[RMDB]
RNA sequence: GGGAACGACUCGAGUAGAGUCGAAAAUCGGAAUAAUUCAUCAUCAGCUCGUUGUAGCGGUCGAUGAUCGCCUUCUUGUCGGCAACACCUUCCAUCACAUUGCCGAGCACAUCCUUGGAAGGAUCAAGAUGGUCACUAGGUUCGCCUAGUGACCAUCAAAAGAAACAACAACAACAAC
Reactivity to 2A3 in 0.01 (KOAc 150mM, MgCl2 10mM, bicine 150mM(pH8.5), 24C), signal-to-noise 2, nucleotides 027 to 126: u080c020g050g040a080a050u130a160a120u100u000c000a010u020c000a010u000c010a040g010c010u010c030g300u280u270g130u220a020g000c020g010g000u000c100g010a010u010g000a010u010c030g030c000c040u070u010c060u050u160g050u070c010g030g000c010a010a010c050a060c030c030u030u060c030c000a130u240c040a010c000a080u020u100g000c030c000g000a010g030c050a020c010a110u020c030c010u000u040g040g000a040a000g020g000a010u040c020a050a000
Reactivity to DMS in 0.01 (KOAc 150mM, MgCl2 10mM, bicine 150mM(pH8.5), 24C), signal-to-noise 2, nucleotides 027 to 126: u000c080g020g010a080a070u020a130a130u020u000c030a020u000c000a050u010c020a130g040c000u000c050g040u020u000g050u030a030g010c030g020g000u010c040g000a070u010g000a020u000c300g000c090c030u000u000c030u000u000g000u010c030g030g000c040a060a040c230a100c020c050u000u000c020c010a070u010c200a060c140a200u000u000g020c000c000g000a020g020c140a040c040a130u000c010c040u000u000g010g030a040a020g010g040a080u040c100a040a100
The record gives the reactivity of an RNA of 177 nucleotides to 2A3 and DMS. It was measured as part of the RMDB library OK2TST. Values cover nucleotides 27 to 126.